Background:
The data come from the RNA Mapping Database (RMDB), library M2PK50. The record gives the reactivity of an RNA of 177 nucleotides to 2A3 and DMS. High DMS reactivity at an A or C suggests that its Watson-Crick edge is free. Conditions: 150 mM KOAc, 10 mM MgCl2 and 150 mM bicine (pH 8.5), 24 C. For 2A3 the reverse transcriptase was SuperScript II with manganese.
RNA sequence: GGGAACGACUCGAGUAGAGUCGAAAAGCCUGUGGGUUCGCCCACAGGCAAAGAAAGCUGACACGCGCAGCACGCAAUGAAGCGAAAAGCGUGAAAUGAAAAAAAGCGGUUACUUCGGUAACCGCAACUACUUAUCCGUGUUCGCACGGAUAAGUAGAAAAGAAACAACAACAACAAC
Reactivity to 2A3 in 0.01 (KOAc 150mM, MgCl2 10mM, bicine 150mM(pH8.5), 24C), signal-to-noise 2, nucleotides 027 to 126: g020c000c010u010g000u020g000g010g060u100u140c230g080c050c010c000a010c000a000g000g020c000a010a000a000g000a000a060a000g020c010u010g010a020c010a020c000g000c010g000c020a000g010c020a040c030g000c000a090a260u300g060a300a050g030c030g010a010a000a000a000g000c030g030u020g010a090a060a050u130g060a030a040a010a020a000a070a000g010c000g000g020u000u010a000c010u020u050c200g030g000u000a000a000c000c000g000c000a000a010
Reactivity to DMS in 0.01 (KOAc 150mM, MgCl2 10mM, bicine 150mM(pH8.5), 24C), signal-to-noise 1, nucleotides 027 to 126: g050c010c000u000g040u000g000g000g100u000u050c300g010c040c000c020a000c000a000g000g000c010a010a010a100g000a140a170a100g000c000u000g000a080c060a040c000g020c000g000c060a000g000c020a090c060g010c060a140a060u050g050a220a150g010c000g000a080a040a050a070g000c000g000u000g000a150a150a060u030g000a010a000a070a070a120a190a100g000c000g000g000u000u000a000c000u000u000c110g000g010u000a000a000c000c000g020c000a000a020